This 177-nucleotide RNA was probed chemically with DMS and 2A3. The reactions ran in a buffer of 150 mM KOAc, 10 mM MgCl2 and 150 mM bicine (pH 8.5), at 24 C. High DMS reactivity at an A or C suggests that its Watson-Crick edge is free. The 2A3 profile rests on 8,418 reads. Values cover nucleotides 27 to 126. 2A3 is a SHAPE reagent: it acylates the 2'-hydroxyl of flexible nucleotides of all four kinds.
[RMDB]
RNA sequence: GGGAACGACUCGAGUAGAGUCGAAAAACUUUAAAGGAGAUUUCCAAGAGGCUGAGGGUCUAGAUAUGUAUUACGAUCUAGAAACAGGACGUAAAGCACUUCUAAUCGGGGUAACUAUUGGACCUGGACAUUAUUGUCAAUUCGUUGACAAUAAUGUAAAAGAAACAACAACAACAAC
Reactivity to DMS in 0.01 (KOAc 150mM, MgCl2 10mM, bicine 150mM(pH8.5), 24C), signal-to-noise 9, nucleotides 027 to 126: a090c030u000u000u010a070a090a130g000g010a070g010a140u000u000u010c020c010a110a150g000a110g010g010c070u000g010a130g000g000g010u000c030u000a030g010a020u000a030u010g020u000a110u010u010a040c060g000a030u000c090u000a030g010a050a080a300c140a080g000g010a070c060g010u010a060a090a300g000c090a040c050u000u000c020u000a060a060u000c100g010g000g000g000u000a040a070c060u000a070u010u000g010g010a040c020c010u000g010g010
Reactivity to 2A3 in 0.01 (KOAc 150mM, MgCl2 10mM, bicine 150mM(pH8.5), 24C), signal-to-noise 5, nucleotides 027 to 126: a020c070u160u140u150a120a080a040g140g010a080g050a090u120u090u010c030c010a030a020g040a030g110g000c070u080g060a090g030g010g030u000c000u020a020g020a040u040a010u130g050u030a100u080u080a040c050g030a070u000c030u070a020g050a020a080a030c060a040g000g100a010c010g030u080a070a060a050g020c010a040c040u040u020c010u050a050a050u070c020g050g000g000g020u020a040a050c020u030a070u060u060g020g020a020c020c010u000g020g000